[RMDB]
RNA sequence: GGGAACGACUCGAGUAGAGUCGAAAAGAUAUGGAUCCCUCAUAGACAUGAAGCGGUGUCGGAAACGACAUACUUCAACAGCUAUAGGGAUCCUAAGUCAAAAGUGGGCUAGUUCGCUAGCCCACAACUUUCGGUAGAAGUUCGCUUCUACCGAAAGAAAAGAAACAACAACAACAAC
Reactivity to DMS in 0.01 (KOAc 150mM, MgCl2 10mM, bicine 150mM(pH8.5), 24C), signal-to-noise 2, nucleotides 027 to 126: g000a040u000a150u000g000g000a020u000c000c000c010u010c300a010u000a000g000a060c120a190u000g000a010a030g010c110g020g040u010g000u000c000g000g000a050a040a040c000g010a000c010a010u000a100c010u000u000c000a050a060c280a140g020c010u000a040u000a050g000g000g000a010u000c000c000u000a020a050g000u010c020a100a120a110a120g020u000g000g000g020c000u000a010g010u010u000c280g010c000u000a000g010c010c000c000a000c010a000a020
Reactivity to 2A3 in 0.01 (KOAc 150mM, MgCl2 10mM, bicine 150mM(pH8.5), 24C), signal-to-noise 2, nucleotides 027 to 126: g000a010u020a000u050g020g000a000u010c020c020c000u000c090a010u020a050g080a110c190a300u280g010a000a000g060c210g300g070u000g000u010c000g000g000a010a020a000c000g000a010c000a000u010a010c000u020u020c010a200a180c190a210g050c010u000a010u020a010g000g030g030a000u000c000c000u000a000a000g010u000c020a000a000a060a210g000u020g000g020g000c010u000a000g040u080u180c300g020c230u000a000g000c040c030c000a000c000a000a000